[RMDB]
RNA sequence: GGGAACGACUCGAGUAGAGUCGAAAAUGAGGCGUCCUGUUAAGUCAGGCAACGAGCGAGACCCAUUUCCACUGUUGCUAACGACUCCGCGAGGAGGGCGAGUACACUGUGGAGACCGCUGGCGCUAAUUGCGCGAAGUUUUCGAACUUCGCGCAAUAAAAGAAACAACAACAACAAC
Reactivity to DMS in 0.01 (KOAc 150mM, MgCl2 10mM, bicine 150mM(pH8.5), 24C), signal-to-noise 2, nucleotides 027 to 126: u010g000a030g040g040c060g010u000c000c000u050g000u000u030a050a150g010u020c060a060g050g010c170a090a090c140g000a020g050c070g040a300g000a120c030c040c000a300u000u000u000c000c000a050c040u050g000u080u010g010c000u010a010a000c010g020a090c030u000c000c000g010c300g000a300g000g000a000g000g000g000c020g010a000g000u010a000c100a000c020u000g030u000g000g030a000g000a040c210c000g020c000u000g000g000c000g000c010u000a060
Reactivity to 2A3 in 0.01 (KOAc 150mM, MgCl2 10mM, bicine 150mM(pH8.5), 24C), signal-to-noise 2, nucleotides 027 to 126: u210g020a070g010g030c000g030u140c000c000u030g030u030u090a130a150g260u040c030a000g040g000c030a050a010c020g040a000g030c010g010a070g100a120c000c000c020a010u070u020u010c010c010a010c010u020g030u050u070g040c010u010a030a000c000g010a000c000u000c000c000g040c030g020a070g020g000a000g000g010g010c000g010a000g010u000a000c020a000c160u030g000u000g020g000a000g020a000c050c020g000c040u030g010g010c000g000c040u060a030